[RMDB]
RNA sequence: GGGAACGACUCGAGUAGAGUCGAAAAACCAAGUCUGGGGGCCGAUGAGGGUUGGCUCAACGUAGGGUUUUGACUUGAAAACUCAAGCUGUGACCCCAAAACGAUGGAGGUAAAUGAGAAUCCUCCUAAAACUAUGGACACUUCGGUGUCCAUAGAACAAUAGAAAGAUCUUCGGAUCUUUCUAUUGAAAAGAAACAACAACAACAAC
Reactivity to 2A3 in 0.01 (KOAc 150mM, MgCl2 10mM, bicine 150mM(pH8.5), 24C), signal-to-noise 2, nucleotides 027 to 156: a000c000c000a020a010g090u020c030u200g070g000g000g010g040c010c010g050a030u070g070a090g050g100g010u030u050g040g020c000u010c060a020a080c080g090u100a100g040g010g000u030u030u060u080g030a040c010u020u030g070a100a090a050a140c040u020c030a040a050g010c020u040g040u150g130a150c000c010c000c010a020a070a050a030c080g050a060u080g030g010a000g000g010u080a120a150a150u170g010a020g060a080a040u020c000c010u000c000c000u030a040a030a000a000c000u000a010u000g000g000a000c010a000c000u040u050c220g010g000u000g000u000c000c000a000u000a000g000a000a000
Reactivity to DMS in 0.01 (KOAc 150mM, MgCl2 10mM, bicine 150mM(pH8.5), 24C), signal-to-noise 1, nucleotides 027 to 156: a080c010c020a090a090g000u010c030u090g000g000g020g040g060c090c020g010a100u000g010a090g020g000g010u000u000g020g040c030u000c030a030a040c090g030u010a200g000g070g020u000u000u000u000g010a030c060u000u000g010a070a060a110a070c200u010c010a010a100g000c040u010g010u010g010a240c020c000c010c060a060a070a070a090c040g000a110u010g010g010a030g050g050u010a020a110a120u010g020a120g010a200a190u010c000c000u000c000c010u000a020a050a070a170c010u000a040u010g000g010a070c030a020c020u000u000c290g060g000u010g020u010c000c000a000u010a010g010a070a120
Conditions: 150 mM KOAc, 10 mM MgCl2 and 150 mM bicine (pH 8.5), 24 C. The record gives the reactivity of an RNA of 207 nucleotides to 2A3 and DMS. In probing experiments dimethyl sulfate is read out at A N1 and C N3, which are open when not base-paired. 2A3 adducts were read by reverse transcription with SuperScript II with manganese. As a SHAPE reagent, 2A3 marks flexible, mostly unpaired nucleotides at the ribose 2'-OH. For DMS, 2,024 sequencing reads were counted.